The data come from the RNA Mapping Database (RMDB), library TTRDEL. An RNA of 177 nucleotides, treated with 2A3 and DMS and read out base by base. For 2A3 the reverse transcriptase was SuperScript II with manganese. DMS adducts were read by reverse transcription with MarathonRT. Reactivities are given for positions 27 through 126.
RNA sequence: GGGAACGACUCGAGUAGAGUCGAAAAGAUAUGGAUCACCCAGGGAGGAGGUCGGAAACGAUACUCCAUCGAUCUGGUCUCGUGAUCCUAAGUCAAAGUCGUUAAGUAGUUCGCUACUUAACGACAACUUAUUCUGUGCGUUCGCGCACAGAAUAAGAAAAGAAACAACAACAACAAC
Reactivity to 2A3 in 0.01 (KOAc 150mM, MgCl2 10mM, bicine 150mM(pH8.5), 24C), signal-to-noise 3, nucleotides 027 to 126: g020a000u070a020u160g000g010a000u000c000a000c000c030c000a010g000g000g000a030g020g000a000g010g040u000c010g000g080a060a050a010c020g020a020u210a300c030u000c010c000a040u230c010g010a000u000c020u020g000g030u080c180u110c280g000u020g010a010u000c000c000u020a120a010g030u040c090a160a010a080g000u000c000g000u000u010a000a000g000u000a010g010u050u110c280g010c160u010a000c000u000u000a010a000c000g000a000c000a000a000
Reactivity to DMS in 0.01 (KOAc 150mM, MgCl2 10mM, bicine 150mM(pH8.5), 24C), signal-to-noise 3, nucleotides 027 to 126: g010a080u010a300u000g000g030a020u000c000a010c030c000c020a010g000g000g000a020g030g000a010g020g010u000c000g000g010a050a100a190c010g010a030u000a080c000u000c000c010a280u000c120g000a060u000c010u000g000g000u000c150u000c240g000u000g000a000u000c000c010u010a040a100g000u000c080a120a080a150g010u010c000g020u000u000a000a010g000u000a000g010u000u010c220g010c010u000a000c000u000u000a000a010c000g000a010c000a020a030